[RMDB]
RNA sequence: GGGAACGACUCGAGUAGAGUCGAAAAGAAAGAAAGAAAGAAAAUCUGUGAUGAAAAUUUACUGUGCCGAAGACGAGUCUUUCUCGUCGGUGAUGGUUCACAACCCUCUAAGAAGUUCUGAGCUCAAGUCCUGUAAGGUAUUCGUACCUUACAGGACAAAAGAAACAACAACAACAAC
Reactivity to 2A3 in 0.01 (KOAc 150mM, MgCl2 10mM, bicine 150mM(pH8.5), 24C), signal-to-noise 3, nucleotides 027 to 126: g030a010a010a000g140a020a080a000g080a030a130a030g070a030a140a020a060u090c130u060g130u040g050a090u060g030a050a180a080a060u050u160u090a080c070u080g030u100g100c030c030g070a100a020g040a040c000g000a000g040u040c120u030u250u070c000u070c000g020u000c020g010g000u030g020a050u070g000g050u060u030c010a010c000a020a030c010c020c000u020c040u070a120a060g040a060a010g050u120u020c070u090g050a030g040c020u060c160a060a070
Reactivity to DMS in 0.01 (KOAc 150mM, MgCl2 10mM, bicine 150mM(pH8.5), 24C), signal-to-noise 3, nucleotides 027 to 126: g010a070a130a100g000a110a190a110g030a060a030a120g010a150a030a120a080u000c070u010g010u030g000a010u000g000a050a050a110a050u040u010u040a090c110u000g000u000g010c110c050g000a060a090g000a060c010g010a030g000u010c250u020u010u000c000u000c000g000u010c000g000g010u000g000a100u030g000g030u000u000c050a000c020a060a100c100c040c000u000c040u020a070a050g020a070a100g010u000u010c080u020g000a160g020c020u000c030a100a300

This 177-nucleotide RNA was probed chemically with 2A3 and DMS. Values cover nucleotides 27 to 126. Source: RMDB libraries RFM100 and RFMREP, as collected in RNAgym. For 2A3 the reverse transcriptase was SuperScript II with manganese.